[RMDB]
RNA sequence: GGGAACGACUCGAGUAGAGUCGAAAAAGGAGAAGAGGACUUCAGGAGAAGGAGACUAGCUUCCUUCCUAGAGCUAGUCAGAGCUCUUCGAGAGAAGUCGAUCUCUCCUCUUCCUGACUGAGAGAAGUCUCCUUCGACUUCAGAGAGCUCUCUCUUCGCUAAACAUUGGAUUCGUCCAAUGUUUAGCAAAAGAAACAACAACAACAAC
Reactivity to 2A3 in 0.01 (KOAc 150mM, MgCl2 10mM, bicine 150mM(pH8.5), 24C), signal-to-noise 5, nucleotides 027 to 156: a000g050g020a030g010a220a040g020a060g030g040a010c000u000u000c010a010g020g050a050g020a030a000g040g020a030g000a000c000u010a000g020c010u210u160c030c040u160u200c030c040u130a060g000a000g020c000u000a000g030u030c030a020g020a010g070c020u000c000u120u000c010g010a030g010a020g010a070a010g000u010c000g070a250u000c010u000c000u000c000c000u000c020u030u020c010c010u020g070a080c090u040g000a000g000a010g020a160a060g080u080c000u010c020c000u090u130c060g200a270c060u200u130c180a020g080a000g000a000g060c000u000c000u000c000u000c010u050u080c060
Reactivity to DMS in 0.01 (KOAc 150mM, MgCl2 10mM, bicine 150mM(pH8.5), 24C), signal-to-noise 2, nucleotides 027 to 156: a120g010g020a110g000a040a100g010a090g040g000a110c020u000u030c000a170g000g000a300g020a060a030g000g020a290g010a120c010u000a030g000c020u010u000c050c060u010u000c180c080u020a090g030a010g030c000u000a050g010u000c060a100g000a160g020c120u010c020u000u000c020g000a300g020a070g020a030a020g010u010c020g020a070u010c050u000c020u000c000c000u000c000u000u000c010c020u000g010a120c050u000g020a040g010a070g030a050a070g000u000c010u000c030c080u010u010c070g000a070c080u010u010c030a140g010a070g000a060g030c000u000c040u010c010u000c050u000u000c130

The data come from the RNA Mapping Database (RMDB), library OK3TST.
An RNA of 207 nucleotides, treated with 2A3 and DMS and read out base by base.
DMS adducts were read by reverse transcription with MarathonRT.
For DMS, 2,627 sequencing reads were counted.
In probing experiments dimethyl sulfate is read out at A N1 and C N3, which are open when not base-paired.
The RNA was probed in 150 mM KOAc, 10 mM MgCl2 and 150 mM bicine (pH 8.5) at 24 C.